[RMDB]
The record gives the reactivity of an RNA of 207 nucleotides to DMS and 2A3.

RNA sequence: GGGAACGACUCGAGUAGAGUCGAAAACUGAGGCCUUAAGUGGCUGGACCCUGGGCCUAGACUCAGGCCCUGUGGGUUCCAGAGCAGUCUCCUGCCUGCACUGAGUCCCCAGGGUACCUACCCUGACCAUGGCAAGGUAAUGGCACCUUCUGGCCCCCAUUGCGUACUAAUUCGUUAGUACGCAAUGAAAAGAAACAACAACAACAAC
Reactivity to DMS in 0.01 (KOAc 150mM, MgCl2 10mM, bicine 150mM(pH8.5), 24C), signal-to-noise 3, nucleotides 027 to 156: c060u020g020a060g010g000c010c010u030u000a080a130g010u010g020g020c020u000g000g000a130c110c000c010u020g020g020g000c090c000u010a100g010a080c090u010c110a100g000g010c010c020c000u000g030u000g060g030g020u000u000c020c010a050g020a170g010c040a100g020u000c020u010c040c040u010g000c080c010u000g050c180a180c040u010g010a260g000u000c010c090c050c030a030g010g020g020u010a080c110c080u010a070c020c000c010u000g010a090c040c040a100u000g000g030c030a060a140g000g010u000a010a170u000g000g010c030a050c040c000u000u020c040u010g020g010c020c010c010c050
Reactivity to 2A3 in 0.01 (KOAc 150mM, MgCl2 10mM, bicine 150mM(pH8.5), 24C), signal-to-noise 4, nucleotides 027 to 156: c050u060g080a050g040g000c010c020u050u050a050a040g070u050g110g030c010u010g010g030a020c010c000c000u030g040g040g010c030c020u050a080g090a140c070u060c160a000g020g030c000c000c000u090g080u190g000g000g000u140u060c010c010a000g010a020g040c030a030g030u020c030u070c130c030u050g010c000c000u020g030c020a030c070u030g010a010g070u070c020c000c020c010a000g030g020g000u090a140c000c060u070a050c020c020c000u020g020a050c020c040a080u140g040g000c020a030a060g000g000u060a040a070u090g020g000c020a060c020c010u030u010c010u010g020g000c010c000c000c010
Values cover nucleotides 27 to 156. The data come from the RNA Mapping Database (RMDB), library OK3TST. As a SHAPE reagent, 2A3 marks flexible, mostly unpaired nucleotides at the ribose 2'-OH. For DMS, 6,507 sequencing reads were counted.